This 207-nucleotide RNA was probed chemically with 2A3. Values cover nucleotides 27 to 156. Values are in units of 0.01, from 0 to 300, in steps of 10. The reactions ran in a buffer of 150 mM KOAc, 10 mM MgCl2 and 150 mM bicine (pH 8.5), at 24 C. 2A3 adducts were read by reverse transcription with SuperScript II with manganese.

RNA sequence: GGGAACGACUCGAGUAGAGUCGAAAAGUGAUGCUCUCGCUGCCUAAUGGCGGUGCGGGAAACCCACUCUAAAGUCCUUAGGGUUAGCCCCUUAAGGCGGGGUUCGGAGGCACCUGGCAACAGAAGCUGAAACUGUGCACAUUCGUGUGCACAGUAAGCAGUGUGGAGAAUUCGUUCUCCACACUGCAAAAGAAACAACAACAACAAC
Reactivity to 2A3 in 0.01 (KOAc 150mM, MgCl2 10mM, bicine 150mM(pH8.5), 24C), signal-to-noise 1, nucleotides 027 to 156: g100u140g070a050u290g000c010u000c020u020c000g000c030u060g030c000c010u300a300a220u230g000g000c010g060g130u070g010c020g000g000g000a080a010a000c010c120c000a010c000u130c110u140a050a010a290g300u040c000c000u000u000a010g000g000g060u080u080a070g010c080c000c000c000u000u030a000a000g010g020c000g000g010g000g000u020u230c030g100g000a080g040g020c000a000c000c000u020g190g010c010a000a000c000a050g000a000a000g000c030u010g000a070a000a000c000u000g000u010g000c000a010c010a010u020u090c300g050u010g000u000g000c000a000c000a000g000u000a010a010